[RMDB]
RNA sequence: GGGAACGACUCGAGUAGAGUCGAAAAUUUUUUUGGGACCCUUAACCUCUUGGUCCAUAAGUGGUUAAACUCGAAGGAAACAGUUUAAUAAGGUUUACCACUCUUUAAUUUCUUUGUCUGUACAUGGAAGGGAGGAUUUUUUAAAGGGUGUUAAUGGCUAGAUAUAUAGAUUCGUCUGUGUGUCUAGAAAAGAAACAACAACAACAAC
Reactivity to DMS in 0.01 (KOAc 150mM, MgCl2 10mM, bicine 150mM(pH8.5), 24C), signal-to-noise 1, nucleotides 027 to 156: u000u000u000u000u000u000u000g040g040g040a080c020c000c040u000u000a070a170c000c020u000c010u010u000g010g000u000c030c020a100u010a050a030g010u010g000g020u000u000a020a020a040c010u000c030g030a230a260g020g010a170a120a210c050a090g010u010u000u010a070a080u000a130a070g000g020u000u000u000a050c000c000a010c010u010c020u010u000u000a050a100u000u000u000c030u000u000u010g010u010c030u000g000u000a080c070a070u000g010g000a060a180g020g020g010a080g020g000a010u010u000u020u010u020u020a030a040a030g020g010g020u000g010u010u000a040a040u000g000g010